RNA sequence: GGGAACGACUCGAGUAGAGUCGAAAAGAAAGGCAGCAAGUGCAGCCCACGCAGAGGCAUGCUUUUGCAUGCCCAGUCGAGCCCACGACUCAGGGCAGCUGCGUCACUGAGGGCAGCUGCCGAAAGACGUGCUAUGGAGGUUCGCCUCCAUAGCACGAAAAGAAACAACAACAACAAC
Reactivity to 2A3 in 0.01 (KOAc 150mM, MgCl2 10mM, bicine 150mM(pH8.5), 24C), signal-to-noise 1, nucleotides 027 to 126: g050a020a080a010g010g000c020a020g040c030a170a120g060u130g080c010a000g000c000c020c000a060c070g090c010a030g110a200g060g000c050a050u010g000c000u210u160u130u160g000c050a090u010g010c000c010c000a000g010u010c000g000a010g010c000c000c000a020c000g030a000c000u000c080a030g100g000g000c010a000g000c000u000g000c010g050u030c000a100c220u250g070a190g050g040g000c000a000g030c000u010g000c000c010g010a030a020a000g050a000
Reactivity to DMS in 0.01 (KOAc 150mM, MgCl2 10mM, bicine 150mM(pH8.5), 24C), signal-to-noise 1, nucleotides 027 to 126: g010a100a140a120g010g020c000a030g020c010a140a190g040u010g010c020a060g000c000c010c030a050c130g010c070a120g000a130g010g010c000a030u000g000c000u000u010u010u010g000c000a030u010g010c000c000c010a030g000u000c040g000a080g000c000c020c010a300c050g000a080c000u000c170a200g000g010g000c020a070g020c020u010g000c000g020u000c100a130c270u040g000a140g010g010g000c010a010g020c000u000g000c020c020g010a010a050a110g000a200
Overview: This 177-nucleotide RNA was probed chemically with 2A3 and DMS. For DMS, 857 sequencing reads were counted. For 2A3 the reverse transcriptase was SuperScript II with manganese.